Annotation:
Chemical mapping of a 177-nucleotide RNA with 2A3 and DMS. DMS adducts were read by reverse transcription with MarathonRT. For 2A3, 1,864 sequencing reads were counted. The RNA was probed in 150 mM KOAc, 10 mM MgCl2 and 150 mM bicine (pH 8.5) at 24 C.
[RMDB]
RNA sequence: GGGAACGACUCGAGUAGAGUCGAAAAGGUCUUACGACAGCCAUGAGAACAACGGUAACUCUCAUGGUUGUCACAGAGAUGUGACGACGCUGUCCAUCUAAGUUACCGCUUGUUAGAUGGUAAGACAUCGUCGGGUAAAUUUCGAUUUACCCGACGAAAAAGAAACAACAACAACAAC
Reactivity to 2A3 in 0.01 (KOAc 150mM, MgCl2 10mM, bicine 150mM(pH8.5), 24C), signal-to-noise 2, nucleotides 027 to 126: g050g010u000c000u020u140a080c150g010a000c050a010g060c000c010a000u020g040a000g010a150a060c070a100a020c070g090g030u060a040a040c000u000c000u010c060a040u010g050g000u010u000g000u000c000a010c000a010g110a010g030a030u060g080u070g040a020c040g010a020c030g000c220u050g040u040c050c050a060u020c030u090a040a020g000u000u050a010c000c010g000c130u050u050g050u050u000a030g000a040u020g040g000u030a030a030g020a030c010a090
Reactivity to DMS in 0.01 (KOAc 150mM, MgCl2 10mM, bicine 150mM(pH8.5), 24C), signal-to-noise 3, nucleotides 027 to 126: g000g030u000c010u000u000a060c140g020a030c050a070g070c040c000a000u000g000a040g010a020a050c110a120a080c070g030g010u010a030a050c060u000c030u000c020a010u000g020g020u000u000g000u000c000a010c070a050g000a140g010a100u010g010u000g000a060c040g030a060c080g000c130u010g000u000c110c050a020u000c050u000a000a050g000u000u010a020c020c020g020c170u010u000g010u000u000a070g000a020u010g010g010u000a060a040g000a070c070a120